[RMDB]
RNA sequence: GGGAACGACUCGAGUAGAGUCGAAAAGGCUAUUAUCUUCUUUACGUAGUAAUCGUCGUAGGGAGAGAACUCCGACAUCUUGUAGAACAACGAUUUGAUCAUAGGUAGAGAUACUUUCAGUCUGUGGGGGCGCGGUAAGCUUCGGCUUACCGCGCCCAAAAGAAACAACAACAACAAC
Reactivity to 2A3 in 0.01 (KOAc 150mM, MgCl2 10mM, bicine 150mM(pH8.5), 24C), signal-to-noise 1, nucleotides 027 to 126: g000g050c050u000a000u040u000a000u000c080u010u000c090u080u300u080a170c240g170u000a000g000u100a150a080u050c000g200u000c000g010u130a090g160g000g000a000g000a040g040a030a030c000u000c000c000g020a130c040a050u010c030u020u090g060u180a100g030a230a000c000a000a030c060g010a000u040u140u300g010a050u100c000a090u080a030g020g020u000a000g000a000g000a000u040a000c000u000u040u000c000a050g040u000c000u060g000u060g000g000
Chemical mapping of a 177-nucleotide RNA with 2A3. Source: RMDB library OK1LIB, as collected in RNAgym.